Annotation: Source: RMDB libraries RFM100 and RFMREP, as collected in RNAgym. Chemical mapping of a 177-nucleotide RNA with DMS and 2A3. Values cover nucleotides 27 to 126. The RNA was probed in 150 mM KOAc, 10 mM MgCl2 and 150 mM bicine (pH 8.5) at 24 C.
[RMDB]
RNA sequence: GGGAACGACUCGAGUAGAGUCGAAAAGUCUCGGUGAAUCAAAGUUCUUUGGUCUUGUGAAUCCACGUGCAACUAAAAGGAGUGCUAACAGUGACUUUUGGUACGCUGUGUAUAUGCAGAAAAAGAUUACAUACCUGUGUUUCGACACAGGUAUGUAAAAAGAAACAACAACAACAAC
Reactivity to DMS in 0.01 (KOAc 150mM, MgCl2 10mM, bicine 150mM(pH8.5), 24C), signal-to-noise 3, nucleotides 027 to 126: g000u020c010u020c030g010g020u020g030a090a080u010c080a060a080a140g000u010u000c000u000u020u010g020g000u010c020u010u030g050u010g020a130a090u010c050c010a040c020g000u000g040c030a070a020c030u010a020a010a050a050g010g010a060g010u040g000c100u030a070a100c160a100g000u010g000a080c030u000u000u010u050g020g010u020a050c090g050c000u000g030u020g010u000a060u050a040u000g000c000a090g020a030a040a070a050a050g000a160u010
Reactivity to 2A3 in 0.01 (KOAc 150mM, MgCl2 10mM, bicine 150mM(pH8.5), 24C), signal-to-noise 4, nucleotides 027 to 126: g060u030c010u000c040g010g080u010g050a090a030u040c050a090a050a070g090u120u030c060u040u050u090g070g030u010c050u060u070g000u030g090a040a100u020c020c000a030c040g050u050g000c050a090a020c050u100a030a070a020a020g060g060a070g060u060g010c050u090a110a080c040a080g060u010g160a120c000u010u090u060u120g010g000u040a070c100g000c020u040g000u000g050u040a010u000a010u230g000c000a000g060a090a080a020a000a000g120a030u050